[RMDB]
RNA sequence: GGGAACGACUCGAGUAGAGUCGAAAAAGUAGGUACGCCUACAAGCGGGAGGUGUAACAGGACUGGACUCCCGGCAGCCCCAGGGCAGGGGCGUGGGGAGCUGGUCCUAGCUCAGCGCUCCCGGAAAAUAGACUAGCGAGUUCGCUCGCUAGUCUAUAAAAGAAACAACAACAACAAC
Reactivity to 2A3 in 0.01 (KOAc 150mM, MgCl2 10mM, bicine 150mM(pH8.5), 24C), signal-to-noise 2, nucleotides 027 to 126: a010g030u020a020g010g020u060a060c250g100c000c000u030a000c040a020a050g070c030g000g000g010a010g000g040u050g020u060a090a040c030a060g000g000a020c010u020g010g070a230c000u000c000c000c000g020g010c060a040g020c010c000c000c000a050g170g100g050c100a070g030g000g000g000c000g000u100g040g040g000g010a000g000c010u010g000g000u000c010c000u000a000g000c010u000c070a040g040c100g050c010u020c000c010c060g020g040a050a030a010
Reactivity to DMS in 0.01 (KOAc 150mM, MgCl2 10mM, bicine 150mM(pH8.5), 24C), signal-to-noise 2, nucleotides 027 to 126: a230g020u000a000g020g040u000a040c300g040c000c010u000a000c000a170a070g000c000g000g000g020a000g000g000u020g020u000a190a250c090a020g020g000a050c000u000g000g030a140c000u000c000c000c090g010g010c100a130g020c000c000c000c000a180g020g020g000c240a180g000g000g000g030c000g030u010g000g000g000g010a000g030c020u010g010g000u000c000c000u000a000g000c190u030c000a040g000c040g000c000u000c020c000c000g000g000a090a110a110